Conditions: 150 mM KOAc, 10 mM MgCl2 and 150 mM bicine (pH 8.5), 24 C. Structure probing data (DMS and 2A3) for a 177-nucleotide construct. The 2A3 profile rests on 3,213 reads.
RNA sequence: GGGAACGACUCGAGUAGAGUCGAAAAGUGAAGAUUGAGAAUGGAGAAGUGUAUGUGGACAGCGAUAUUGUACUAAGUAGUAACUUAGAUGAUAACACUAAGCGUGCUAUAUUGGCAAUGCCGAUCAACUCGGUUAGUAGUUCGCUACUAACCGAGUAAAAGAAACAACAACAACAAC
Reactivity to DMS in 0.01 (KOAc 150mM, MgCl2 10mM, bicine 150mM(pH8.5), 24C), signal-to-noise 4, nucleotides 027 to 126: g010u000g000a050a060g010a080u010u010g010a080g010a060a080u000g010g010a100g000a070a070g010u000g020u000a050u000g040u000g010g000a050c120a090g010c050g010a060u010a040u010u000g020u010a090c060u000a030a080g030u010a050g020u010a180a140c000u000u000a010g010a090u010g010a130u010a040a100c160a080c020u000a030a050g000c050g000u000g010c010u000a040u000a210u010u000g010g000c030a040a040u000g010c020c020g010a080u010c170a070
Reactivity to 2A3 in 0.01 (KOAc 150mM, MgCl2 10mM, bicine 150mM(pH8.5), 24C), signal-to-noise 3, nucleotides 027 to 126: g080u070g020a040a000g020a050u030u210g030a060g020a060a080u100g010g010a030g000a090a060g030u020g030u100a100u070g040u090g050g010a020c000a030g010c020g050a040u010a010u130u060g000u030a240c000u030a090a060g010u040a010g040u010a030a030c020u000u010a020g040a080u140g040a090u130a250a080c030a000c080u020a040a000g040c040g080u040g000c000u030a050u030a070u180u020g000g000c020a040a030u050g020c010c000g040a040u060c040a030